[RMDB]
RNA sequence: GGGAACGACUCGAGUAGAGUCGAAAAUUGUUGACCUUCCGGAGCUCCCUCUCGAGUUCCUCCUUUCUUCUUCUUCCAUCGAUCCACUUUCCGAGUGCCUCUUCUCUCCCCCUCCGGGUUCUCCUCGCUAGUAUGCGCUUCGGCGCAUACAAAAGAAACAACAACAACAAC
Reactivity to 2A3 in 0.01 (KOAc 150mM, MgCl2 10mM, bicine 150mM(pH8.5), 24C), signal-to-noise 2, nucleotides 027 to 129: u030u020g040u060u030g090a090c050c010u070u020c070c020g020g000a000g020c000u020c000c010c000u030c020u030c010g010a010g010u030u020c030c000u030c000c000u030u040u010c000u020u010c020u040u000c000u010u030c020c000a060u030c020g040a030u040c030c010a070c040u030u080u000c010c040g010a030g040u060g060c000c000u020c000u060u050c040u000c000u030c000c000c000c000c000u010c000c000g030g020g000u070u000c000u000c000c000u000c020g020c010u020a020
Reactivity to DMS in 0.01 (KOAc 150mM, MgCl2 10mM, bicine 150mM(pH8.5), 24C), signal-to-noise 3, nucleotides 027 to 129: u020u010g030u000u000g020a190c030c010u030u010c040c100g000g000a120g050c110u000c030c040c030u020c050u040c040g030a100g000u000u030c070c020u020c040c030u000u000u000c030u010u040c020u000u060c030u000u040c090c040a050u040c050g000a110u000c070c030a070c060u000u000u000c040c020g020a100g040u020g010c070c010u000c040u000u000c000u010c030u030c030c020c020c080c000u020c040c090g000g000g000u060u000c030u030c000c000u010c040g010c000u000a080